[RMDB]
RNA sequence: GGGAACGACUCGAGUAGAGUCGAAAAAUCACAACACCUCACGUCAGCAUAGCGCUUUUAACUUUCCCAAGCUACCUGCACACAGUGGCACUGUCAGAUCGACUGGGUGGGUGGAAGUGUCCUAGUCACUCGUUUUCAGAUUCGUCUGAAAACGAGUAAAAGAAACAACAACAACAAC
Reactivity to DMS in 0.01 (KOAc 150mM, MgCl2 10mM, bicine 150mM(pH8.5), 24C), signal-to-noise 4, nucleotides 027 to 126: a100u000c070a060c040a070a180c060a100c040c010u000c050a050c100g010u000c040a070g000c050a060u000a070g020c030g010c020u000u000u000u000a030a090c140u010u000u000c000c000c010a130a090g020c070u000a070c050c050u000g000c070a070c060a040c040a080g010u000g000g020c040a150c080u000g000u020c040a050g010a100u000c090g000a060c020u000g000g020g040u010g010g000g000u000g010g010a090a070g020u010g000u000c010c010u000a070g010u020c090
Reactivity to 2A3 in 0.01 (KOAc 150mM, MgCl2 10mM, bicine 150mM(pH8.5), 24C), signal-to-noise 3, nucleotides 027 to 126: a000u060c050a030c020a090a030c000a040c010c000u050c010a020c030g090u030c040a020g020c010a060u060a070g050c030g010c020u020u060u020u080a110a120c050u000u050u030c000c020c000a020a000g010c000u030a050c000c030u050g070c030a040c000a010c020a070g030u050g070g000c040a010c070u050g030u070c010a010g020a210u110c040g060a070c040u030g060g020g030u080g020g040g000u070g030g030a120a060g070u050g000u020c010c010u060a060g060u050c030